[RMDB]
The record gives the reactivity of an RNA of 177 nucleotides to DMS and 2A3. The RNA was probed in 150 mM KOAc, 10 mM MgCl2 and 150 mM bicine (pH 8.5) at 24 C.

RNA sequence: GGGAACGACUCGAGUAGAGUCGAAAAAUCCAGCGGUACUGCUGAAUUAGCGGCCAGUACGGCCCCGUGUCCGGCUCGCAGGAGCCAGCCGUCCAGCCAGGUUCGUUCAACGCCGGGCCAGGCCGCCUCUUCGCCCAUAAUUCGUUAUGGGCGAAGAAAAAGAAACAACAACAACAAC
Reactivity to DMS in 0.01 (KOAc 150mM, MgCl2 10mM, bicine 150mM(pH8.5), 24C), signal-to-noise 2, nucleotides 027 to 126: a050u040c020c000a040g000c060g020g030u000a030c090u040g060c030u010g010a070a030u030u000a120g010c020g010g000c050c000a180g010u060a060c070g000g040c040c010c040c110g020u010g010u000c080c050g000g000c000u000c100g000c300a040g000g000a010g010c000c000a090g000c050c020g010u000c100c060a110g030c050c060a180g000g040u000u010c030g000u050u010c070a120a160c260g000c040c160g000g020g000c000c020a110g010g000c000c020g010c030c150
Reactivity to 2A3 in 0.01 (KOAc 150mM, MgCl2 10mM, bicine 150mM(pH8.5), 24C), signal-to-noise 3, nucleotides 027 to 126: a000u070c030c000a030g020c010g100g090u110a170c060u120g040c010u030g020a130a070u120u070a220g000c010g020g000c020c000a030g070u130a040c060g040g020c000c030c000c000g120u100g070u080c010c040g020g010c010u030c080g120c080a090g000g140a010g000c010c000a000g000c010c030g080u070c020c010a010g030c010c010a060g000g000u010u090c030g040u090u090c050a060a030c080g030c040c030g000g000g020c000c000a010g000g000c010c020g000c000c000

The 2A3 profile rests on 2,565 reads.